[RMDB]
RNA sequence: GGGAACGACUCGAGUAGAGUCGAAAACUUCGGCUUCAUCACUCCUGACGAUGGCUCUAAAGAUGUGUUCGUACACUUCUCUGCUAUCCAGAACGAUGGUUACAAAUCUCUGGACGAAGGUCAGAAACGAUAACCUCUAGUUCGCUAGAGGUUAUCGAAAAGAAACAACAACAACAAC
Reactivity to 2A3 in 0.01 (KOAc 150mM, MgCl2 10mM, bicine 150mM(pH8.5), 24C), signal-to-noise 3, nucleotides 027 to 126: c010u060u030c000g020g020c030u080u070c010a050u040c010a010c060u030c000c010u020g030a040c040g050a040u050g030g030c020u010c060u140a140a150a010g070a020u030g010u000g010u070u210c120g090u180a020c030a000c000u060u040c040u000c020u050g040c010u040a010u010c010c010a020g000a020a020c090g010a040u030g050g080u080u110a060c040a040a080a040u020c050u000c030u040g030g020a010c010g050a030a010g020g030u030c060a020g120a100a120a020
Reactivity to DMS in 0.01 (KOAc 150mM, MgCl2 10mM, bicine 150mM(pH8.5), 24C), signal-to-noise 3, nucleotides 027 to 126: c070u000u000c080g020g000c050u000u000c030a050u000c050a130c150u000c080c020u000g000a060c120g020a070u000g010g000c020u000c110u010a060a130a050g000a030u010g010u000g000u000u000c200g000u000a120c050a040c030u000u000c020u010c030u000g010c050u000a080u010c020c040a020g000a030a120c140g020a030u000g010g030u000u010a060c210a070a150a090u010c060u000c040u000g020g010a040c070g000a060a060g000g010u000c130a060g010a100a080a160